This 207-nucleotide RNA was probed chemically with DMS and 2A3. Source: RMDB library OK3TST, as collected in RNAgym. For 2A3, 693 sequencing reads were counted.

RNA sequence: GGGAACGACUCGAGUAGAGUCGAAAAGGCAUUAAGUCGGUCACUUUUAAGAAGAACUGGCGAGGGGGGUCAUUAACGAAUAAUGAAGGUCUUAGUGAUAGUCUGCCUGACUUGAUACUUAUUUUCGGCGGUUCUGAGCAUAGAAGUGUUAUAAAAGACACGAAAGCUUAUUCGUAAGCUUUCGUGUAAAAGAAACAACAACAACAAC
Reactivity to DMS in 0.01 (KOAc 150mM, MgCl2 10mM, bicine 150mM(pH8.5), 24C), signal-to-noise 2, nucleotides 027 to 156: g010g040c020a100u010u000a070a140g000u010c010g020g000u000c090a040c040u010u000u010u010a050a230g000a150a060g020a050a040c040u010g020g010c070g020a110g050g050g010g050g040g020u000c040a070u020u000a050a130c080g000a110a120u000a030a080u000g000a090a120g010g020u010c020u010u000a030g050u020g020a090u000a070g000u000c050u000g010c160c080u020g010a080c040u000u010g000a190u000a060c020u000u000a110u030u000u010u000c050g010g010c080g000g000u000u010c010u000g020a070g000c070a130u000a090g010a010a070g060u000g000u000u000a130u010a060a060a120a230g010
Reactivity to 2A3 in 0.01 (KOAc 150mM, MgCl2 10mM, bicine 150mM(pH8.5), 24C), signal-to-noise 1, nucleotides 027 to 156: g000g020c030a020u080u220a050a030g020u080c030g050g000u000c010a060c070u120u110u050u100a110a050g040a050a020g000a130a000c000u030g280g060c110g010a020g000g000g000g000g100g000u000c000a000u070u020a060a000c130g010a050a060u120a070a050u100g050a080a070g120g040u010c030u050u060a000g020u010g030a020u020a030g050u020c040u070g050c050c040u010g000a010c010u010u000g020a000u010a200c010u040u100a090u110u130u010u050c010g040g000c000g000g020u000u030c060u020g040a060g030c000a050u050a090g100a020a000g040u040g000u080u050a030u030a040a120a000a020g070

The reactions ran in a buffer of 150 mM KOAc, 10 mM MgCl2 and 150 mM bicine (pH 8.5), at 24 C. Reactivities are given for positions 27 through 156.